This 177-nucleotide RNA was probed chemically with DMS and 2A3. The DMS profile rests on 2,536 reads. DMS adducts were read by reverse transcription with MarathonRT. As a SHAPE reagent, 2A3 marks flexible, mostly unpaired nucleotides at the ribose 2'-OH. The reactions ran in a buffer of 150 mM KOAc, 10 mM MgCl2 and 150 mM bicine (pH 8.5), at 24 C.
[RMDB]
RNA sequence: GGGAACGACUCGAGUAGAGUCGAAAAAGACUUGUAUUCGUACAAGUCUACAGAAAUUUCGCUAGCACACGAUCACACCUAGCGUUCUCAAUAACCAUCGAACAACGUGUCAAUUCGUUGACACGAAUCUUUAGGGUAACUUCGGUUACCCUAAAGAAAAAGAAACAACAACAACAAC
Reactivity to DMS in 0.01 (KOAc 150mM, MgCl2 10mM, bicine 150mM(pH8.5), 24C), signal-to-noise 4, nucleotides 027 to 126: a030g000a000c000u000u000g000u000a000u010u030c220g010u000a020c010a000a000g000u000c000u010a100c220a100g010a100a080a150u010u000u000c020g010c020u000a010g020c110a110c150a100c080g010a040u020c090a070c090a110c200c000u000a020g000c000g020u000u000c000u000c030a120a090u010a080a090c150c100a060u010c070g000a150a090c220a120a190c020g020u000g000u010c000a020a050u000u010c170g020u000u000g010a000c000a000c020g000a020a050
Reactivity to 2A3 in 0.01 (KOAc 150mM, MgCl2 10mM, bicine 150mM(pH8.5), 24C), signal-to-noise 3, nucleotides 027 to 126: a000g010a000c000u020u010g000u000a020u040u120c250g010u040a000c000a010a010g000u010c000u000a010c010a030g210a030a110a050u050u050u020c000g000c010u000a000g060c100a040c020a020c220g160a140u170c020a040c030a040c090c010u000a000g000c000g010u000u000c010u010c000a010a090u160a070a050c040c050a100u130c070g080a090a040c010a060a100c060g000u000g010u000c000a000a030u050u080c200g070u090u000g000a000c010a010c000g010a010a030